[RMDB]
Notes: Chemical mapping of a 177-nucleotide RNA with 2A3. 2A3 adducts were read by reverse transcription with SuperScript II with manganese. The 2A3 profile rests on 465 reads.
RNA sequence: GGGAACGACUCGAGUAGAGUCGAAAAGCAGUAUACUGCCACUUGUGUGAGAAUACUUUUAGUACAAGCGAGUACACGCAGUUUACUGCCACUUGUGUGAGAAUACUUUUUGUACAAGCGAGUACACGACGAAUCCGUUGUUCGCAACGGAUUCGUCAAAAGAAACAACAACAACAAC
Reactivity to 2A3 in 0.01 (KOAc 150mM, MgCl2 10mM, bicine 150mM(pH8.5), 24C), signal-to-noise 1, nucleotides 027 to 126: g000c000a000g000u000a010u000a000c000u000g000c000c000a000c000u000u000g000u000g000u080g120a060g050a150a130u010a000c000u140u100u130u300a030g000u000a040c000a020a020g020c000g000a060g000u060a060c020a000c090g010c040a000g010u000u010u010a000c000u000g000c000c000a090c030u020u000g000u020g010u000g150a030g160a000a090u150a220c050u110u070u110u110u010g020u000a000c000a020a210g060c120g050a020g000u060a000c000a020c050

It was measured as part of the RMDB library OK1LIB.